Structure probing data (2A3) for a 207-nucleotide construct. The reactions ran in a buffer of 150 mM KOAc, 10 mM MgCl2 and 150 mM bicine (pH 8.5), at 24 C. Reactivities are given for positions 27 through 156.
[RMDB]
RNA sequence: GGGAACGACUCGAGUAGAGUCGAAAAGACGUAAUCCGCGCAAAUCCACAAACGCCAACGAUGAGGGUUUCGCUGUAGCCGCUUAAGGCAACAGCCGGGGCCGCCUGAGCCCUGUUACCAAAGACGGGAAACUCGAUGCCAUUCGUGGCAUCGAGAACCAUCAGGGUUACUUCGGUAACCCUGAUGGAAAAGAAACAACAACAACAAC
Reactivity to 2A3 in 0.01 (KOAc 150mM, MgCl2 10mM, bicine 150mM(pH8.5), 24C), signal-to-noise 2, nucleotides 027 to 156: g030a010c020g000u030a010a070u030c050c020g010c030g040c090a000a000a140u050c050c020a070c040a080a220a050c120g010c040c030a070a050c060g100a090u120g050a110g000g000g020u020u090u120c000g010c000u000g000u000a040g020c020c000g050c230u260u230a120a080g000g010c020a020a000c000a000g010c010c000g000g000g000g000c000c040g040c000c020u020g010a010g000c000c010c020u030g060u090u070a020c020c010a050a010a000g100a040c000g000g000g000a030a040a020c000u000c000g010a020u000g020c000c000a020u050u060c210g080u080g000g000c000a000u000c000g000a010g000a000a020